[RMDB]
RNA sequence: GGGAACGACUCGAGUAGAGUCGAAAAAGUGUGGUGGUACGUGGCUGUAGUCCUAGCUACUGGGGAGACUGAAGUGGGAGGAGUGUGAGACUGCAAUGAGCUCUGAUUGCACCACUGCACUCCAGCCUGGGUGACAAAGUGAGACUCUGUCUCAGUAGAUGCGUCAUUACUUCGGUAAUGACGCAUCAAAAGAAACAACAACAACAAC
Reactivity to 2A3 in 0.01 (KOAc 150mM, MgCl2 10mM, bicine 150mM(pH8.5), 24C), signal-to-noise 1, nucleotides 027 to 156: a010g110u090g000u040g080g010u060g010g080u030a020c020g040u050g010g010c010u070g070u070a070g020u130c000c020u020a000g000c000u060a010c020u000g030g000g040g000a050g020a100c030u080g050a050a040g070u170g000g000g020a010g010g000a030g020u000g000u000g030a070g000a010c090u020g010c000a020a050u050g000a050g090c070u040c000u180g100a110u000u050g020c050a000c030c000a150c000u000g010c030a010c000u040c030c000a000g020c010c000u030g000g000g030u040g000a000c060a050a100a040g050u090g070a030g000a030c020u010c110u300g030u000c000u000c000a000g050u050a030

The data come from the RNA Mapping Database (RMDB), library OK3TST. Structure probing data (2A3) for a 207-nucleotide construct. The reactions ran in a buffer of 150 mM KOAc, 10 mM MgCl2 and 150 mM bicine (pH 8.5), at 24 C. Reactivities are given for positions 27 through 156.